Record summary:
Structure probing data (2A3 and DMS) for a 207-nucleotide construct. For 2A3 the reverse transcriptase was SuperScript II with manganese. The 2A3 profile rests on 8,588 reads. It was measured as part of the RMDB library OK3TST. Values cover nucleotides 27 to 156. For DMS the reverse transcriptase was MarathonRT.

[RMDB]
RNA sequence: GGGAACGACUCGAGUAGAGUCGAAAAGGCACCAGCUCUAGGUUCAACAAGGGUUAUAUUGGCAAGCACAGUUGGAUAUCUGCCCAUACUCUGAAAUGCUUCAUCCAGGCGGUCUUAUUCCUGAGUACUUGCUGCAAUGAUGGAGGCCUCUAGGGCACAUGAGUAUACUAUUCGUAGUAUACUCAUGAAAAGAAACAACAACAACAAC
Reactivity to 2A3 in 0.01 (KOAc 150mM, MgCl2 10mM, bicine 150mM(pH8.5), 24C), signal-to-noise 9, nucleotides 027 to 156: g090g000c070a030c080c020a030g010c010u000c020u040a040g030g030u090u110c060a060a050c020a100a110g040g010g000u110u010a090u020a040u160u070g020g000c030a040a030g060c030a060c030a120g070u140u110g080g000a050u050a060u120c040u050g010c010c000c000a040u070a070c030u050c010u090g040a060a080a100u140g030c000u030u020c010a020u010c020c030a030g020g010c020g020g010u020c030u060u080a120u150u100c030c050u050g040a010g020u090a060c030u090u280g000c010u030g030c050a060a130u140g010a010u020g010g040a010g040g020c010c020u060c040u070a040g010g010g000c010a000
Reactivity to DMS in 0.01 (KOAc 150mM, MgCl2 10mM, bicine 150mM(pH8.5), 24C), signal-to-noise 6, nucleotides 027 to 156: g020g020c040a100c030c020a090g040c020u000c020u020a060g010g030u000u000c060a070a110c060a080a080g020g020g020u000u010a090u000a100u000u010g010g020c030a050a050g030c050a070c040a130g020u000u000g000g010a100u000a070u000c040u000g020c010c010c040a150u000a030c040u000c030u000g000a090a060a090u010g010c040u000u000c020a070u000c020c050a200g000g030c040g010g010u000c050u000u000a110u010u000c070c050u000g000a150g010u000a040c020u000u000g030c010u010g030c050a060a090u010g010a070u000g010g020a080g030g010c050c020u000c040u000a080g020g050g050c020a230